Chemical mapping of a 177-nucleotide RNA with 2A3 and DMS. The RNA was probed in 150 mM KOAc, 10 mM MgCl2 and 150 mM bicine (pH 8.5) at 24 C.
RNA sequence: GGGAACGACUCGAGUAGAGUCGAAAACUACGAGUGUCAAGACUUCCUGCAACCUCUUACCUGCUUUUGAACUGUGUGGAUGUUGCAGAGCGUUCCAUAAAAGAGUACAUAAAUCUACUGGAUGCUCAUUCAAGCACACGUUCGCGUGUGCUUGAAUAAAAGAAACAACAACAACAAC
Reactivity to 2A3 in 0.01 (KOAc 150mM, MgCl2 10mM, bicine 150mM(pH8.5), 24C), signal-to-noise 1, nucleotides 027 to 126: c020u080a020c030g000a010g070u030g000u070c060a100a060g050a100c040u010u000c030c000u010g000c000a010a020c010c000u060c020u060u160a030c000c000u040g190c110u230u270u100u260g140a200a100c060u090g030u040g010u000g160g020a020u050g000u020u000g000c040a000g000a000g000c000g030u000u030c000c000a000u100a080a140a010a010g050a010g030u050a040c040a080u260a110a220a030u010c000u070a090c050u080g060g040a050u000g000c000u000c040
Reactivity to DMS in 0.01 (KOAc 150mM, MgCl2 10mM, bicine 150mM(pH8.5), 24C), signal-to-noise 2, nucleotides 027 to 126: c020u000a070c070g000a150g020u000g000u010c070a110a120g000a110c120u000u000c080c010u000g000c010a000a010c010c030u000c000u000u010a010c010c000u000g000c090u010u020u020u020g000a050a130c040u000g000u010g030u010g020g000a020u000g000u020u010g010c020a090g000a060g000c100g020u010u010c000c040a080u000a110a090a090a160g000a000g010u000a070c120a200u010a050a100a080u010c100u020a110c140u000g010g020a080u000g010c010u010c020